The record gives the reactivity of an RNA of 177 nucleotides to 2A3 and DMS. For DMS the reverse transcriptase was MarathonRT. The RNA was probed in 150 mM KOAc, 10 mM MgCl2 and 150 mM bicine (pH 8.5) at 24 C. Values cover nucleotides 27 to 126.
[RMDB]
RNA sequence: GGGAACGACUCGAGUAGAGUCGAAAAGAUAUGGAAUCCAUAUCAGUCCGAAUCCAUGAACUACAUCUGUACUUCGGAAACGAAGUACUGAUGCAUGGACAUGUGGACUGAUAUGGAUUCCUAAGUCGUAAGAUAUUACGUUCGCGUAAUAUCUUACAAAAGAAACAACAACAACAAC
Reactivity to 2A3 in 0.01 (KOAc 150mM, MgCl2 10mM, bicine 150mM(pH8.5), 24C), signal-to-noise 1, nucleotides 027 to 126: g070a040u090a040u100g010g000a010a000u010c020c000a000u000a010u000c010a000g000u000c000c040g100a070a110u000c030c010a000u000g020a100a140c080u250a060c300a010u040c000u010g010u000a020c000u000u000c000g040g000a070a070a030c040g000a000a010g000u000a000c000u020g000a000u000g000c000a010u030g030g020a040c040a140u300g120u300g050g000a010c030u000g000a020u000a000u000g030g000a000u000u000c000c000u000a030a010g030u000c060
Reactivity to DMS in 0.01 (KOAc 150mM, MgCl2 10mM, bicine 150mM(pH8.5), 24C), signal-to-noise 7, nucleotides 027 to 126: g020a110u010a300u010g010g010a030a000u000c000c000a000u000a000u000c000a000g020u000c000c000g020a220a250u000c050c000a000u010g000a100a070c120u010a300c010a000u000c000u000g010u000a000c000u000u000c010g020g010a110a100a270c010g010a010a000g010u000a000c000u000g000a010u000g000c010a000u000g010g000a040c210a060u020g040u020g010g010a020c000u000g000a000u000a000u000g000g000a010u000u000c000c000u000a020a060g010u010c110